Structure probing data (2A3 and DMS) for a 170-nucleotide construct. For 2A3, 12,290 sequencing reads were counted. It was measured as part of the RMDB library 15KLIB. For 2A3 the reverse transcriptase was SuperScript II with manganese.

RNA sequence: GGGAACGACUCGAGUAGAGUCGAAAAAUGUUUCCCAGCCAGGGGUUUUCAUCCUCAAGUUUCUUGAUCUUCUUGUUGAUUCGCCGGAGCUCCUUCUCGGCUAUUCGCUUUUUCUUCCUUUCCUCUACUAGUUACUCCUUCGGGAGUAACAAAAGAAACAACAACAACAAC
Reactivity to 2A3 in 0.01 (KOAc 150mM, MgCl2 10mM, bicine 150mM(pH8.5), 24C), signal-to-noise 5, nucleotides 027 to 129: a000u100g030u030u030u030c000c010c000a010g030c030c070a020g000g030g010g000u050u090u130u170c070a100u070c000c000u040c020a010a080g040u040u070u010c000u020u100g030a090u020c020u090u000c020u050u110g060u070u080g040a090u050u060c030g010c040c000g030g040a040g000c020u040c020c000u120u040c060u020c020g020g000c020u020a050u020u030c000g040c010u040u020u010u040u020c000u030u050c010c010u020u030u030c010c000u030c000u020a060c010u020a050
Reactivity to DMS in 0.01 (KOAc 150mM, MgCl2 10mM, bicine 150mM(pH8.5), 24C), signal-to-noise 2, nucleotides 027 to 129: a060u000g010u000u020u050c000c020c000a000g040c090c110a120g000g020g000g050u020u110u040u020c080a080u020c020c040u000c070a110a150g000u000u000u000c000u000u000g030a060u030c000u050u010c040u000u000g000u020u010g020a050u000u100c080g040c050c030g000g000a110g040c090u010c030c070u000u000c040u010c000g010g000c140u020a000u000u000c100g020c060u060u020u030u050u000c080u040u030c070c030u000u000u000c000c010u000c070u060a130c000u030a090